This 177-nucleotide RNA was probed chemically with 2A3 and DMS.
RNA sequence: GGGAACGACUCGAGUAGAGUCGAAAAGAAAAGAGCGUAAUCGCGUCUUGACGUGAGUGAGACUAGACUGUAGACUAUCCCAAGUGGGAUAGUAUAGCUCACAAUACGCUGAUCUACAGUCAAAAGACGUAUAGUAGCCGUUCGCGGCUACUAUACGAAAAGAAACAACAACAACAAC
Reactivity to 2A3 in 0.01 (KOAc 150mM, MgCl2 10mM, bicine 150mM(pH8.5), 24C), signal-to-noise 7, nucleotides 027 to 126: g200a000a080a010a000g070a000g000c020g010u030a040a040u050c010g000c010g020u010c090u120u230g120a030c010g010u010g010a010g010u010g010a000g000a030c010u030a050g000a010c000u010g000u010a000g000a010c000u000a010u020c000c000c040a070a150g230u300g050g000g000a000u010a000g000u010a020u020a020g000c000u010c010a010c000a000a040u060a010c010g010c010u030g020a020u000c000u000a000c000a000g000u000c000a020a000a000a040g110a020
Reactivity to DMS in 0.01 (KOAc 150mM, MgCl2 10mM, bicine 150mM(pH8.5), 24C), signal-to-noise 4, nucleotides 027 to 126: g000a070a040a080a080g010a070g000c010g030u010a050a300u010c000g010c020g010u010c040u040u010g010a020c000g000u020g000a040g010u000g010a000g000a160c150u030a110g010a010c000u000g010u010a010g010a070c010u010a010u000c000c000c000a300a160g010u040g010g020g000a000u000a000g010u000a030u020a040g000c010u000c030a020c020a110a080u000a000c010g010c000u000g020a100u010c010u000a010c000a010g000u010c000a130a080a090a080g010a170
The 2A3 profile rests on 9,041 reads. Source: RMDB library OK1LIB, as collected in RNAgym. For DMS, 8,755 sequencing reads were counted. The RNA was probed in 150 mM KOAc, 10 mM MgCl2 and 150 mM bicine (pH 8.5) at 24 C.